Structure probing data (2A3 and DMS) for a 177-nucleotide construct. The data come from the RNA Mapping Database (RMDB), library OK2TST. Conditions: 150 mM KOAc, 10 mM MgCl2 and 150 mM bicine (pH 8.5), 24 C.
[RMDB]
RNA sequence: GGGAACGACUCGAGUAGAGUCGAAAAAAUAGGCUGUUCCAGUAUGCCGAUGUAUGUGGGGUAGCAGCGUCCCCCACGGAUGCUUUGGCGAACGUAAUCAUACAUCUCGUUUGACGGCGCAAGCAGGAUCGUUACUUACCUUCGGGUAAGUAACGAUAAAAGAAACAACAACAACAAC
Reactivity to 2A3 in 0.01 (KOAc 150mM, MgCl2 10mM, bicine 150mM(pH8.5), 24C), signal-to-noise 2, nucleotides 027 to 126: a000a020u160a060g050g020c010u030g020u100u000c010c000a030g020u070a110u180g010c020c020g010a010u070g000u000a020u070g050u040g000g040g000g030u030a050g000c060a020g060c030g050u110c000c010c000c000c020a020c000g020g000a030u060g000c010u060u110u170g070g000c000g000a040a020c030g030u120a040a020u090c010a000u030a060c010a050u010c050u050c060g050u040u060u140g070a040c030g000g000c040g000c020a000a070g030c000a010g020g090
Reactivity to DMS in 0.01 (KOAc 150mM, MgCl2 10mM, bicine 150mM(pH8.5), 24C), signal-to-noise 3, nucleotides 027 to 126: a050a070u020a110g010g000c010u010g000u010u000c040c040a150g010u000a050u000g020c020c060g000a050u000g000u010a020u000g030u010g000g000g000g010u000a140g010c010a080g000c050g000u010c100c000c040c040c120a040c090g000g020a090u010g010c000u000u000u000g030g000c050g010a080a160c050g020u010a120a070u000c050a040u000a030c060a050u000c050u020c120g000u010u000u000g020a110c070g010g000c080g000c090a090a040g040c080a110g010g000